Chemical mapping of a 177-nucleotide RNA with 2A3. Values cover nucleotides 27 to 126. Source: RMDB library OK1LIB, as collected in RNAgym. The RNA was probed in 150 mM KOAc, 10 mM MgCl2 and 150 mM bicine (pH 8.5) at 24 C. Values are in units of 0.01, from 0 to 300, in steps of 10. 2A3 adducts were read by reverse transcription with SuperScript II with manganese.

RNA sequence: GGGAACGACUCGAGUAGAGUCGAAAACGGUCGUUUACGAUUUUUUCGCACCCUUUUUGGCCAACGUCGUGGUCUAUCUCCACAAGUACCUGUCUUCCAAAUGGAAGAAGAUCCACGGCGACGACCAAGGAAUGCACUGCUUCGGCAGUGCAUUCCUAAAAGAAACAACAACAACAAC
Reactivity to 2A3 in 0.01 (KOAc 150mM, MgCl2 10mM, bicine 150mM(pH8.5), 24C), signal-to-noise 1, nucleotides 027 to 126: c020g020g030u020c010g030u040u120u120a070c150g020a180u090u110u000u000u000u020c050g000c050a170c010c000c000u070u030u080u110u070g060g000c000c000a000a000c090g050u000c000g020u010g060g000u010c000u070a270u000c060u080c000c060a010c060a300a000g020u070a080c020c020u150g130u090c080u070u010c000c000a020a000a300u090g000g000a000a060g000a000a000g000a060u180c010c000a010c000g010g000c010g020a020c040g000a000c000c020a010